[RMDB]
RNA sequence: GGGAACGACUCGAGUAGAGUCGAAAAGACGGAAAAGAUCGAACCUAAGAAGAUUAGGAAGUGCGAGCCGAAUCCUAGGGCUCCUAGGGACGCAUCGUCCGAUGCGAAAUAAACACAAACGUCGAAACCAUUACCUGCUCUUCGGAGCAGGUAAUGGAAAAGAAACAACAACAACAAC
Reactivity to DMS in 0.01 (KOAc 150mM, MgCl2 10mM, bicine 150mM(pH8.5), 24C), signal-to-noise 2, nucleotides 027 to 126: g020a090c000g010g000a070a070a110a020g010a160u010c050g000a160a060c070c000u000a010a030g000a070a050g000a170u000u000a020g000g000a180a150g040u040g000c030g000a030g000c010c030g000a030a050u040c000c000u010a020g010g000g000c070u020c010c010u000a010g000g000g030a170c020g020c060a060u000c000g000u040c230c060g010a130u000g010c000g000a110a100a130u020a050a090a040c160a030c180a030a070a090c060g000u000c000g000a090a170a060
Reactivity to 2A3 in 0.01 (KOAc 150mM, MgCl2 10mM, bicine 150mM(pH8.5), 24C), signal-to-noise 3, nucleotides 027 to 126: g000a000c040g000g070a000a010a020a130g080a040u060c010g000a040a060c000c000u030a050a030g080a100a020g050a210u030u010a010g000g080a180a020g090u080g080c020g020a000g000c030c040g010a050a020u060c010c000u010a010g030g050g020c030u090c060c000u020a010g040g000g020a000c020g020c010a000u020c000g230u120c100c170g020a000u010g000c000g060a000a020a090u140a080a110a000c100a000c060a040a170a040c040g010u000c020g030a040a000a000